The record gives the reactivity of an RNA of 177 nucleotides to DMS and 2A3. For 2A3, 1,553 sequencing reads were counted.
RNA sequence: GGGAACGACUCGAGUAGAGUCGAAAACCAGGAGAUGUCCUGGCAUCCCCCUUGGGAACUCAUACCUUGGGGGAGGACAACCCGGGGAACUGAAACAUCUAAGUACCCGGAGGAGAAGAAAUCAACUGCUGUAGAGAAAUUUCGAUUUCUCUACAGCAAAAGAAACAACAACAACAAC
Reactivity to DMS in 0.01 (KOAc 150mM, MgCl2 10mM, bicine 150mM(pH8.5), 24C), signal-to-noise 2, nucleotides 027 to 126: c000c030a020g000g000a070g000a220u150g040u010c000c000u000g000g010c040a190u000c000c000c000c000c000u050u000g000g000g000a130a100c300u050c200a050u090a220c010c000u010u010g000g000g080g000g020a030g000g040a120c020a100a110c070c020c000g020g010g030g000a160a070c070u000g020a130a220a030c200a170u000c030u010a140a060g070u000a180c000c000c000g000g000a030g000g000a150g010a210a140g030a090a140a070u030c030a060a220c280u000
Reactivity to 2A3 in 0.01 (KOAc 150mM, MgCl2 10mM, bicine 150mM(pH8.5), 24C), signal-to-noise 3, nucleotides 027 to 126: c000c000a000g040g030a080g040a110u120g100u260c010c000u000g010g000c000a100u010c000c000c000c000c030u030u010g010g010g010a120a100c020u070c180a040u120a200c020c000u000u000g000g000g000g000g000a000g020g000a010c030a020a090c000c000c000g010g000g000g000a070a030c040u080g070a180a080a070c040a050u040c010u070a080a000g000u000a000c000c000c000g000g010a070g030g030a100g020a060a070g060a020a080a070u120c030a020a050c040u030

The reactions ran in a buffer of 150 mM KOAc, 10 mM MgCl2 and 150 mM bicine (pH 8.5), at 24 C. Source: RMDB library RFM100, as collected in RNAgym. For DMS the reverse transcriptase was MarathonRT.